[RMDB]
RNA sequence: GGGAACGACUCGAGUAGAGUCGAAAAGAUAUGGAUUAGAGGGAGAGCAAUUCGGAAACGAAUUGGCUCGACGAUCUCUACUGUCCUAAGUCAAAUCGUUAGAAAAUCUUCGGAUUUUCUAACGAAACACAUAACAGAUCUUCGGAUCUGUUAUGUGAAAAGAAACAACAACAACAAC
Reactivity to 2A3 in 0.01 (KOAc 150mM, MgCl2 10mM, bicine 150mM(pH8.5), 24C), signal-to-noise 3, nucleotides 027 to 126: g000a010u020a020u070g000g010a000u010u000a010g000a000g010g000g010a020g000a000g000c000a000a010u020u010c000g020g020a020a020a010c010g000a020a010u030u040g220g060c000u000c000g040a070c010g000a010u000c000u000c000u040a120c160u210g030u020c000c000u000a040a000g010u020c020a040a090a180u070c000g010u000u010a000g000a010a020a010a010u010c030u080u130c300g100g010a020u010u000u000u000c000u000a000a000c000g000a000a010a000
Reactivity to DMS in 0.01 (KOAc 150mM, MgCl2 10mM, bicine 150mM(pH8.5), 24C), signal-to-noise 8, nucleotides 027 to 126: g000a020u000a070u020g010g000a020u010u000a000g000a030g000g000g010a020g000a010g010c010a020a000u000u000c000g020g000a010a020a060c000g010a010a000u000u000g010g010c000u000c010g010a100c260g000a070u010c000u000c000u020a030c300u010g000u000c000c000u000a020a030g000u000c010a090a050a190u000c000g000u010u010a010g000a030a000a000a000u000c000u000u000c270g020g000a010u000u000u000u000c000u000a000a000c000g010a010a030a160
About this RNA: Chemical mapping of a 177-nucleotide RNA with 2A3 and DMS. 2A3 adducts were read by reverse transcription with SuperScript II with manganese. The RNA was probed in 150 mM KOAc, 10 mM MgCl2 and 150 mM bicine (pH 8.5) at 24 C. DMS adducts were read by reverse transcription with MarathonRT.